[RMDB]
RNA sequence: GGGAACGACUCGAGUAGAGUCGAAAAGAGUACAACCUCUUAAUUGAAAAGAAACCGAGUUUCAAAUCCUGAUGAAGACGGUUGCUUUCUCCGCCCGGAGAGCGUUUCGAUUGAACGGCAGGAGAGACUGUUUGGUGCUAUUCGUAGCACCAAACAGAAAAGAAACAACAACAACAAC
Reactivity to 2A3 in 0.01 (KOAc 150mM, MgCl2 10mM, bicine 150mM(pH8.5), 24C), signal-to-noise 2, nucleotides 027 to 126: g000a010g000u040a070c010a070a090c010c010u000c010u000u060a100a150u190u170g060a000a000a040a130g190a010a070a000c070c000g060a210g080u010u000u000c080a090a080a050u080c040c020u170g030a150u160g010a020a000g060a000c030g000g010u000u000g080c050u070u110u000c000u000c000c020g030c000c000c000g050g000a020g000a000g010c070g000u000u190u300c130g080a180u000u030g020a010a000c030g010g000c070a170g010g010a040g000a010g020a010
Reactivity to DMS in 0.01 (KOAc 150mM, MgCl2 10mM, bicine 150mM(pH8.5), 24C), signal-to-noise 2, nucleotides 027 to 126: g000a030g000u000a120c300a130a200c160c000u010c000u000u040a090a130u040u020g000a110a010a100a110g030a120a040a000c100c020g000a090g000u030u000u020c000a130a090a010u000c000c050u000g000a180u010g020a060a000g020a150c180g000g000u000u000g000c210u000u030u000c000u010c000c010g000c020c070c000g000g000a230g000a000g000c040g020u000u070u040c060g000a070u000u000g000a160a150c300g000g000c000a020g040g010a030g070a120g000a060